RNA sequence: GGGAACGACUCGAGUAGAGUCGAAAACUCUGCAUACCGAUUGCAUAAUUUCCCUUCACUACUCUGCUACCAGAUAAAUAACAGGAGAUUUAACAAUCAUCACAUGGAAAACCAUUCCCUGAAUAACACAGCCUUCUCUGUCUCUCUUGGCAGUCGGCCGUACCACGGGAUUCGUCCCGUGGUACGGAAAAGAAACAACAACAACAAC
Reactivity to 2A3 in 0.01 (KOAc 150mM, MgCl2 10mM, bicine 150mM(pH8.5), 24C), signal-to-noise 1, nucleotides 027 to 156: c010u020c060u090g000c010a030u070a170c010c070g100a080u060u000g000c000a070u060a160a130u050u000u010c000c000c020u040u070c100a120c070u090a070c010u010c040u010g060c020u050a040c070c020a030g030a040u140a080a100a030u200a080a090c060a010g170g010a050g020a060u110u080u100a120a050c050a060a110u080c050a040u080c000a020c040a270u070g040g120a130a000a070a170c040c050a080u030u050c000c000c000u010g110a150a060u070a200a020c160a010c010a050g000c000c000u070u060c040u020c000u080g040u010c000u020c000u020c040u070u070g050g040c020a000g120u210c040g000g020
Structure probing data (2A3) for a 207-nucleotide construct. It was measured as part of the RMDB library OK3TST. The 2A3 profile rests on 413 reads. The RNA was probed in 150 mM KOAc, 10 mM MgCl2 and 150 mM bicine (pH 8.5) at 24 C. 2A3 adducts were read by reverse transcription with SuperScript II with manganese.